The data come from the RNA Mapping Database (RMDB), library M2PK90. An RNA of 177 nucleotides, treated with 2A3 and DMS and read out base by base. Conditions: 150 mM KOAc, 10 mM MgCl2 and 150 mM bicine (pH 8.5), 24 C.
[RMDB]
RNA sequence: GGGAACGACUCGAGUAGAGUCGAAAAAAUUUCUAGGAAACUAGCAGGUGGCCAACCGCCCGGGCCACCGUUACUCCACUCCACUCCUAAGGGACUGGAUUGGAGGAACAUAACAGGGCAAAUGAAAGUGAAGCAUAAUAUUCGUAUUAUGCUUCACAAAAGAAACAACAACAACAAC
Reactivity to 2A3 in 0.01 (KOAc 150mM, MgCl2 10mM, bicine 150mM(pH8.5), 24C), signal-to-noise 3, nucleotides 027 to 126: a000a010u140u140u020c010u010a000g020g020a120a080a050c010u010a030g050c100a150g060g000u000g000g030c000c010a030a030c050c080g000c000c000c000g010g000g020c000c010a000c000c000g000u010u030a020c000u000c000c000a000c010u000c000c010a010c000u010c000c010u050a120a200g120g000g000a000c020u010g000g000a000u000u030g000g000a000g010g010a010a000c010a050u190a060a030c040a090g000g010g000c000a020a060a060u150g020a050a060a030
Reactivity to DMS in 0.01 (KOAc 150mM, MgCl2 10mM, bicine 150mM(pH8.5), 24C), signal-to-noise 3, nucleotides 027 to 126: a060a070u020u010u000c010u010a040g000g000a190a140a120c010u010a010g030c300a070g020g000u000g000g000c000c010a020a070c120c230g000c000c000c010g010g000g000c000c000a000c010c010g000u000u000a040c000u000c000c000a010c030u000c000c000a010c130u000c000c000u000a140a100g040g000g020a020c070u000g010g000a020u010u000g000g000a010g000g000a020a020c040a090u000a050a070c170a050g030g020g040c000a050a080a060u000g000a080a090a120